RNA sequence: GGGAACGACUCGAGUAGAGUCGAAAAGAUAUGGACUACCCACCAAUGCAGCCUUUGAUCGCUUUCGGAAACGAAAGCGGGAGGCUUCCCAUUGAGGUCCUAAGUCAAACUUCCCUUCGGGGAAGAAGUCACUCUAAUAGUUCGCUAUUAGAGUGACAAAAGAAACAACAACAACAAC
Reactivity to DMS in 0.01 (KOAc 150mM, MgCl2 10mM, bicine 150mM(pH8.5), 24C), signal-to-noise 5, nucleotides 027 to 126: g000a060u010a190u000g010g010a010c010u000a100c000c020c020a300c130c000a020a000u010g090c140a010g000c010c000u000u010u030g020a060u010c000g000c010u000u000u000c000g010g000a110a070a180c010g010a010a010a010g020c000g010g010g000a000g010g020c000u000u000c160c220c010a020u000u000g010a140g020g010u000c000c010u000a090a110g000u010c070a090a170a260c010u000u000c000c000c010u000u010c180g040g000g000g000a000a010g000a030a090
Reactivity to 2A3 in 0.01 (KOAc 150mM, MgCl2 10mM, bicine 150mM(pH8.5), 24C), signal-to-noise 3, nucleotides 027 to 126: g030a020u120a110u140g000g010a010c020u160a230c040c000c040a020c020c000a020a000u100g010c180a040g010c010c010u300u260u120g120a150u180c020g000c000u020u000u010c010g030g010a090a060a060c010g010a000a020a000g010c000g000g000g000a000g000g000c000u010u010c000c010c000a010u010u010g020a030g010g040u020c000c010u040a230a030g090u080c080a060a060a110c030u010u030c020c000c000u010u090c300g060g000g010g000a000a010g000a010a010